[RMDB]
RNA sequence: GGGAACGACUCGAGUAGAGUCGAAAACUUUGCAGGGUGUGCUGAGAAUCGUGGUUCAGUGUGGGUCCAAUACGGCAGAAUACCUUUACGAGGGCUAUUUGUGUGAAAUGGUCCCUGGUCCGCAAAAGGUUGUCCGGUGUUUCGGCGCCGGACGACCAAAAGAAACAACAACAACAAC
Reactivity to 2A3 in 0.01 (KOAc 150mM, MgCl2 10mM, bicine 150mM(pH8.5), 24C), signal-to-noise 9, nucleotides 027 to 126: c020u070u060u110g030c070a080g020g040g010u090g020u060g060c020u030g020a030g070a180a110u150c080g070u070g040g030u100u060c030a040g010u030g040u080g100g010g010u010c010c000a020a040u120a080c050g020g000c020a010g050a030a040u100a090c000c000u040u070u060a100c160g070a070g000g000g010c020u020a040u030u040u030g220u030g020u030g080a040a040a040u040g010g020u080c000c000c010u020g020g020u000c020c010g010c040a020a040a030a060
Reactivity to DMS in 0.01 (KOAc 150mM, MgCl2 10mM, bicine 150mM(pH8.5), 24C), signal-to-noise 7, nucleotides 027 to 126: c050u010u020u010g030c050a050g000g000g020u000g020u010g010c020u010g000a070g000a070a060u020c090g020u020g010g010u010u010c060a080g020u020g010u010g000g010g010u020c040c040a060a080u030a090c080g000g020c050a050g000a080a060u020a050c040c020u000u010u030a090c160g020a080g000g000g000c180u000a030u010u000u010g010u030g000u040g010a060a070a050u010g000g000u010c020c000c000u000g000g010u000c030c030g000c100a050a030a070a120